The record gives the reactivity of an RNA of 177 nucleotides to 2A3 and DMS.
Reactivities are given for positions 27 through 126.
For 2A3 the reverse transcriptase was SuperScript II with manganese.
The reactions ran in a buffer of 150 mM KOAc, 10 mM MgCl2 and 150 mM bicine (pH 8.5), at 24 C.
For DMS the reverse transcriptase was MarathonRT.
RNA sequence: GGGAACGACUCGAGUAGAGUCGAAAAUGUCAACAUGAAAUCUGGAAGUGGGAGGCAAGAGGCCCACAGUAGGCAUGAGCUGAGACACUGCUAGGCUGCCCCUCUGGGAAGUACAUCAGACCUGUGCAUGCGCAAUAAGUUUCGACUUAUUGCGCAUAAAAGAAACAACAACAACAAC
Reactivity to 2A3 in 0.01 (KOAc 150mM, MgCl2 10mM, bicine 150mM(pH8.5), 24C), signal-to-noise 2, nucleotides 027 to 126: u070g020u000c030a000a010c040a110u070g060a070a060a050u040c010u060g070g050a140a000g010u060g030g030g000a020g030g060c050a030a030g040a030g100g050c030c030c010a090c000a000g080u070a040g000g000c060a040u070g050a030g050c060u030g040a010g010a040c050a000c050u040g000c020u010a020g040g000c010u030g030c000c000c000c000u030c020u030g020g030g010a080a000g030u050a040c010a040u090c010a010g120a150c010c030u080g040u030g080c040
Reactivity to DMS in 0.01 (KOAc 150mM, MgCl2 10mM, bicine 150mM(pH8.5), 24C), signal-to-noise 3, nucleotides 027 to 126: u020g010u010c050a080a110c090a050u000g000a060a070a110u010c040u000g020g010a060a130g010u010g020g000g000a150g000g000c050a110a060g000a180g020g020c020c030c030a060c040a070g020u000a050g010g030c050a040u010g010a120g030c040u000g010a160g000a100c070a050c070u000g000c060u000a090g010g020c040u000g000c020c020c030c050u010c080u000g000g000g000a020a060g010u000a050c090a050u000c040a060g000a110c060c040u000g020u000g020c130